An RNA of 177 nucleotides, treated with 2A3 and DMS and read out base by base. For DMS the reverse transcriptase was MarathonRT. Source: RMDB library OK2TRN, as collected in RNAgym.
RNA sequence: GGGAACGACUCGAGUAGAGUCGAAAAAUCCAUGAUCGAUCGUACGUACUAGACUGAGGAUCUCAUGGAUCGGUACGAUCUCAUGUCUAGCUAGGGUACGACUCAUGACACUCUAGCUCAUGACAGGGAGAGCUAGAGCAUUCGUGCUCUAGCUCUCAAAAGAAACAACAACAACAAC
Reactivity to 2A3 in 0.01 (KOAc 150mM, MgCl2 10mM, bicine 150mM(pH8.5), 24C), signal-to-noise 3, nucleotides 027 to 126: a000u030c020c010a020u060g030a100u190c110g010a020u000c000g010u060a030c010g020u020a070c040u140a080g120a220c030u090g080a080g020g080a090u030c040u010c050a070u160g050g020a050u040c000g030g030u080a030c060g020a100u000c040u030c050a060u080g010u000c000u050a010g000c010u020a010g030g000g000u040a040c040g090a070c130u080c120a150u210g050a050c020a000c070u010c000u010a000g000c000u040c040a070u150g020a000c030a030g070g110
Reactivity to DMS in 0.01 (KOAc 150mM, MgCl2 10mM, bicine 150mM(pH8.5), 24C), signal-to-noise 3, nucleotides 027 to 126: a040u010c030c010a070u020g010a030u020c170g010a030u000c000g020u020a090c210g010u020a140c210u000a110g000a080c100u010g010a120g000g010a060u000c000u000c090a090u000g000g000a030u010c080g000g000u000a070c200g000a050u000c000u000c020a060u020g010u000c050u000a030g000c060u000a020g020g000g000u000a060c030g020a090c250u020c140a090u000g010a130c190a070c000u000c000u000a030g000c010u000c120a040u000g000a140c120a070g010g000
For DMS, 1,778 sequencing reads were counted.